[RMDB]
RNA sequence: GGGAACGACUCGAGUAGAGUCGAAAAGAUAUGGAUAGCGUAGUUAAUGCCCCACAACGAGCUGGCCAUUCGGAAACGAAUGGCAGCGAUGAGUUGUGGGGCAUUAGGUUCGAAGCUAUCCUAAGUCGUAAACAUAAUCCUUCGGGAUUAUGUUUACAAAAGAAACAACAACAACAAC
Reactivity to DMS in 0.01 (KOAc 150mM, MgCl2 10mM, bicine 150mM(pH8.5), 24C), signal-to-noise 3, nucleotides 027 to 126: g010a100u000a300u020g000g000a010u000a010g020c010g000u000a300g000u010u000a010a000u000g000c000c000c000c000a010c020a010a000c010g000a230g010c000u010g020g020c010c000a000u000u000c000g010g000a180a130a200c000g010a010a010u000g000g010c000a000g000c000g010a120u020g010a270g010u000u000g020u000g000g000g010g000c000a000u000u000a000g010g010u010u000c070g010a170a300g000c010u000a000u000c000c000u000a030a130g020u020c110
Annotation: The data come from the RNA Mapping Database (RMDB), library TTRINS. Chemical mapping of a 177-nucleotide RNA with DMS. DMS adducts were read by reverse transcription with MarathonRT. The RNA was probed in 150 mM KOAc, 10 mM MgCl2 and 150 mM bicine (pH 8.5) at 24 C.